[RMDB]
RNA sequence: GGGAACGACUCGAGUAGAGUCGAAAAUGCUGAAAAGGUUAGAGGGAUAAGCGAAGGUACUAGCUAUUUUGUGAGUUCCUCGGGCACUAUCAAAAACACAUGCCCAAUAAAGAAAGUCAAUAGCGACGGUACUCUAAUAGUUCGCUAUUAGAGUACCAAAAGAAACAACAACAACAAC
Reactivity to DMS in 0.01 (KOAc 150mM, MgCl2 10mM, bicine 150mM(pH8.5), 24C), signal-to-noise 6, nucleotides 027 to 126: u020g010c090u000g000a010a050a060a170g000g000u010u010a080g000a030g010g010g000a020u010a030a300g000c010g020a060a040g010g030u000a060c100u020a130g030c080u000a040u010u000u000u010g000u000g010a300g000u010u000c010c000u000c050g000g010g010c020a020c030u010a160u010c090a060a080a040a060a100c150a070c160a050u000g000c020c010c000a100a070u040a060a090a080g000a070a070a080g010u000c060a040a060u020a070g010c080g000a060c140
Reactivity to 2A3 in 0.01 (KOAc 150mM, MgCl2 10mM, bicine 150mM(pH8.5), 24C), signal-to-noise 5, nucleotides 027 to 126: u100g000c020u060g030a050a060a050a110g170g040u180u150a070g020a030g020g020g000a020u040a070a020g020c020g030a050a000g030g010u070a110c050u050a090g080c010u020a080u080u050u010u050g080u010g010a060g030u000u020c000c000u010c000g000g000g020c060a050c050u120a110u130c070a080a040a050a060a040c070a010c010a100u090g010c000c000c000a030a050u200a030a050a020g150a020a090a000g040u020c020a050a070u050a100g060c020g080a030c020

Structure probing data (DMS and 2A3) for a 177-nucleotide construct. For 2A3 the reverse transcriptase was SuperScript II with manganese.